[RMDB]
RNA sequence: GGGAACGACUCGAGUAGAGUCGAAAAUGAACGACACCGCGUUGUCUGCCCAGCACGUCUGGUAGAGCGCCUGGAACGCGAUGAGCUGGGUGAGUGUCAAGUCGUCAGCAGACUCAACGAUCUCCUCAGCGUCACGUCCGUGCAGAUCGACCACGGCUAUCGUUCAUAUUUUCGAAUAUGAACGAUAAAAAGAAACAACAACAACAAC
Reactivity to DMS in 0.01 (KOAc 150mM, MgCl2 10mM, bicine 150mM(pH8.5), 24C), signal-to-noise 6, nucleotides 027 to 156: u010g030a090a130c060g000a150c040a180c050c040g020c120g020u000u000g010u000c030u000g000c010c010c020a130g020c050a080c040g030u010c030u010g010g020u010a060g000a100g000c040g000c040c030u010g040g020a060a030c010g010c010g000a050u000g000a240g040c010u000g000g020g020u000g010a040g010u010g000u000c010a150a060g000u000c010g000u010c100a240g020c180a210g000a030c010u000c020a010a040c130g000a050u000c000u000c010c010u000c010a040g030c010g020u000c030a040c020g010u010c000c030g030u000g010c020a090g010a080u000c030g010a090c010c000a020c000g020g010c070
Reactivity to 2A3 in 0.01 (KOAc 150mM, MgCl2 10mM, bicine 150mM(pH8.5), 24C), signal-to-noise 9, nucleotides 027 to 156: u110g010a070a020c050g060a010c030a020c030c060g100c070g090u090u050g060u010c050u050g040c020c020c000a010g010c080a060c060g060u110c070u050g010g010u040a030g010a020g040c030g000c010c040u040g020g020a120a030c020g020c010g060a090u060g080a020g020c000u010g000g020g030u280g030a000g000u150g040u040c020a020a010g010u010c010g040u060c060a030g080c040a040g100a010c010u010c070a060a110c100g010a020u020c000u000c000c000u010c000a010g000c000g040u020c010a010c020g010u000c010c000g010u030g010c040a070g020a230u080c030g020a030c010c010a010c020g020g000c010
Structure probing data (DMS and 2A3) for a 207-nucleotide construct.